[RMDB]
RNA sequence: GGGAACGACUCGAGUAGAGUCGAAAAGAUAUGGACCUUAGAGGACUUUUGACGCCUAAUCGGAAACGAUAGGCGAUAAGUCCGAUUGAGGUCCUAAGUCAAAGUGGACGCGUUCGCGCGUCCACAAGUAAAACCUGAAGUUCGCUUCAGGUUUUACAAAAGAAACAACAACAACAAC
Reactivity to 2A3 in 0.01 (KOAc 150mM, MgCl2 10mM, bicine 150mM(pH8.5), 24C), signal-to-noise 2, nucleotides 027 to 126: g040a010u080a040u150g020g000a000c000c010u030u020a020g040a070g090g010a000c000u110u110u170u240g240a150c030g000c010c000u100a300a300u020c000g030g000a080a050a010c030g010a010u000a010g010g000c030g000a000u000a000a010g000u000c010c000g000a020u020u140g020a010g020g010u000c000c000u000a060a000g020u000c020a000a160a000g000u010g010g000a000c000g050c000g000u030u110c300g020c020g010c030g100u030c000c000a000c000a000a000
Reactivity to DMS in 0.01 (KOAc 150mM, MgCl2 10mM, bicine 150mM(pH8.5), 24C), signal-to-noise 3, nucleotides 027 to 126: g000a050u000a300u020g000g010a030c000c000u010u010a030g020a300g010g010a020c000u010u000u010u020g010a180c050g010c000c000u000a060a090u010c000g000g010a110a040a170c020g000a010u000a010g000g020c010g010a030u000a030a010g010u010c010c000g000a300u000u000g030a000g010g000u000c000c000u010a020a080g000u000c020a070a150a110g030u000g000g000a020c020g030c000g000u000u020c220g050c000g020c000g000u000c010c010a000c000a010a080